[RMDB]
RNA sequence: GGGAACGACUCGAGUAGAGUCGAAAACCUUAGUACCUCCACAUAACAUAAUAACAAAAGGUCACAAUGGGCAAUCCGCAGCCAAGCUCCCAUAUGUUGGGAGAAGGUUCAGAGACUAUAAUCGGAUGGGCGCAAGCUUAAGGUAUAGUCCACUCCCCAUGCGAUACAAGUUCGCUUGUAUCGCAUGAAAAGAAACAACAACAACAAC
Reactivity to DMS in 0.01 (KOAc 150mM, MgCl2 10mM, bicine 150mM(pH8.5), 24C), signal-to-noise 2, nucleotides 027 to 156: c040c000u000u000a130g030u000a060c080c000u010c020c020a130c060a100u000a090a210c080a200u020a090a150u010a100a140c060a110a090a070a050g000g000u000c120a080c160a110a050u020g000g010g040c010a070a130u000c010c000g030c080a050g030c020c010a050a200g000c010u010c000c000c010a050u010a150u000g040u000u000g030g000g010a030g030a060a040g000g030u010u000c050a040g000a080g000a050c020u000a020u000a040a100u010c030g000g050a190u000g020g000g030c010g010c190a050a120g020c070u000u010a080a300g010g030u000a080u000a060g010u010c010c040a070c100u000c030c060c010
Reactivity to 2A3 in 0.01 (KOAc 150mM, MgCl2 10mM, bicine 150mM(pH8.5), 24C), signal-to-noise 6, nucleotides 027 to 156: c000c000u000u030a040g020u080a050c000c030u080c090c060a060c040a120u220a140a040c050a060u270a270a070u140a220a030c050a070a100a040a000g010g000u030c060a020c020a090a160u100g010g010g000c020a030a100u050c050c030g030c060a000g010c010c000a050a040g030c000u010c000c010c020a020u090a070u240g270u100u070g010g000g000a000g000a020a020g010g000u040u040c040a010g070a010g000a070c020u030a020u060a140a110u090c020g070g000a030u070g110g010g000c020g010c030a040a050g010c010u050u090a110a020g020g000u020a000u020a030g000u000c000c030a030c060u020c000c000c000